This 177-nucleotide RNA was probed chemically with 2A3 and DMS. Values cover nucleotides 27 to 126. For 2A3 the reverse transcriptase was SuperScript II with manganese. The data come from the RNA Mapping Database (RMDB), libraries RFM100 and RFMREP. For DMS the reverse transcriptase was MarathonRT.
RNA sequence: GGGAACGACUCGAGUAGAGUCGAAAAUCCCUAUUACCCGCAAGGCGUAAUGCGGGCACCAGUAACUCCUACCCUAUGGUGUCUCCUAUCUGUAGGUCCCAGUGGAGCGAUGAAGCCUGCCCAGCGGCCUAUUAUUUCUGUUCGCAGAAAUAAUAGGAAAAGAAACAACAACAACAAC
Reactivity to 2A3 in 0.01 (KOAc 150mM, MgCl2 10mM, bicine 150mM(pH8.5), 24C), signal-to-noise 9, nucleotides 027 to 126: u010c000c000c000u030a090u050u210a040c010c000c010g010c060a070a080g100g010c070g090u120a090a120u090g010c010g000g000g000c000a030c010c020a010g060u090a040a040c020u020c010c010u030a060c020c000c010u040a050u070g030g010u030g050u040c050u040c030c020u090a120u110c020u040g080u050a020g010g040u060c030c030c010a050g050u070g040g020a030g020c020g020a030u060g030a040a020g020c000c020u020g000c000c010c010a020g020c020g040g000
Reactivity to DMS in 0.01 (KOAc 150mM, MgCl2 10mM, bicine 150mM(pH8.5), 24C), signal-to-noise 9, nucleotides 027 to 126: u000c000c000c000u010a060u020u010a070c060c010c000g020c130a090a090g020g010c150g020u000a070a060u010g010c050g000g000g020c070a030c120c050a060g010u020a180a120c040u010c030c020u000a110c070c020c030u010a060u000g000g010u000g000u010c060u010c060c060u010a050u010c050u010g020u010a060g000g010u010c050c040c050a100g020u010g000g010a060g000c030g000a110u020g000a160a170g000c030c020u000g000c010c040c020a160g010c070g010g010